[RMDB]
RNA sequence: GGGAACGACUCGAGUAGAGUCGAAAAAUUUUAUACAGUAACUUUGAUCUUAUGGAAGUGACCUUCAAUGCUUAUUCUGAAGUAACCUAUAUGGUGGAUACAGGAUGAACAUUCAGUGCCAGGGAGAAUCUUCUCAGGUUGGUUCUCGUUAGAGUGAUCACUAUGAUCAAUUCGUUGAUCAUAGUGAAAAAGAAACAACAACAACAAC
Reactivity to 2A3 in 0.01 (KOAc 150mM, MgCl2 10mM, bicine 150mM(pH8.5), 24C), signal-to-noise 2, nucleotides 027 to 156: a000u080u070u060u070a120u040a090c070a070g030u080a110a080c030u190u160u300g020a020u060c030u020u230a070u130g010g000a070a060g000u040g130a070c010c050u030u020c040a060a120u060g010c000u050u060a020u080u050c010u040g060a080a020g050u070a030a030c010c020u070a080u040a050u300g000g000u030g000g030a000u020a070c010a010g010g010a040u030g000a020a000c000a060u010u040c040a020g100u020g060c040c050a020g050g020g030a040g040a050a020u000c020u110u010c050u060c010a040g070g000u020u020g010g020u080u030c000u000c000g040u010u090a050g050a010g050u050g030a030
Reactivity to DMS in 0.01 (KOAc 150mM, MgCl2 10mM, bicine 150mM(pH8.5), 24C), signal-to-noise 2, nucleotides 027 to 156: a120u010u000u010u010a130u000a220c060a180g020u010a070a040c010u000u010u020g020a090u000c020u000u010a100u010g030g000a090a140g040u010g000a030c030c010u010u000c050a050a050u010g000c050u000u000a030u010u000c010u000g000a070a230g000u000a110a070c030c020u020a110u000a100u010g010g030u000g010g010a190u000a170c000a060g000g000a060u020g000a000a050c010a050u010u000c060a050g020u000g020c010c010a110g010g000g020a090g010a050a090u000c030u000u000c030u000c070a080g020g000u000u010g020g010u010u000c010u010c020g000u010u000a130g010a150g010u000g010a170
This 207-nucleotide RNA was probed chemically with 2A3 and DMS.
The RNA was probed in 150 mM KOAc, 10 mM MgCl2 and 150 mM bicine (pH 8.5) at 24 C.
DMS adducts were read by reverse transcription with MarathonRT.